[RMDB]
RNA sequence: GGGAACGACUCGAGUAGAGUCGAAAAAAAGAUUGAAGCAAGUUCUAUCUGCCAAUGCCGAACAUUUUGCUCAAAUCGAGAGUGCUCAUGAAGAUAUCGAUGCUAAACUGAAAGUCACUCGUGAGGAUACUGAGUAGGCUUUCGAGCCUACUCAGUAAAAAGAAACAACAACAACAAC
Reactivity to DMS in 0.01 (KOAc 150mM, MgCl2 10mM, bicine 150mM(pH8.5), 24C), signal-to-noise 3, nucleotides 027 to 126: a050a020a110g020a050u000u000g000a220a080g040c020a030a110g000u000u000c020u000a060u000c050u030g010c080c060a040a060u000g010c100c090g000a030a030c110a080u030u010u100u000g020c000u000c030a040a050a070u000c050g000a070g000a070g020u010g040c020u000c000a080u010g000a140a040g030a050u000a300u020c030g010a100u030g040c130u020a020a160a130c160u040g010a080a010a030g000u010c020a050c030u010c040g060u010g000a030g000g000a180
Reactivity to 2A3 in 0.01 (KOAc 150mM, MgCl2 10mM, bicine 150mM(pH8.5), 24C), signal-to-noise 3, nucleotides 027 to 126: a010a000a000g080a010u100u090g090a080a030g020c060a080a010g050u080u020c010u130a090u020c010u030g060c020c010a060a080u220g060c050c000g080a110a020c030a130u050u040u090u080g010c000u000c060a090a170a070u020c040g040a000g030a000g110u100g030c000u000c030a060u110g020a130a000g080a070u020a010u160c130g050a100u190g070c050u080a040a130a110c090u050g110a080a050a000g140u130c040a000c070u000c000g030u030g030a060g050g040a030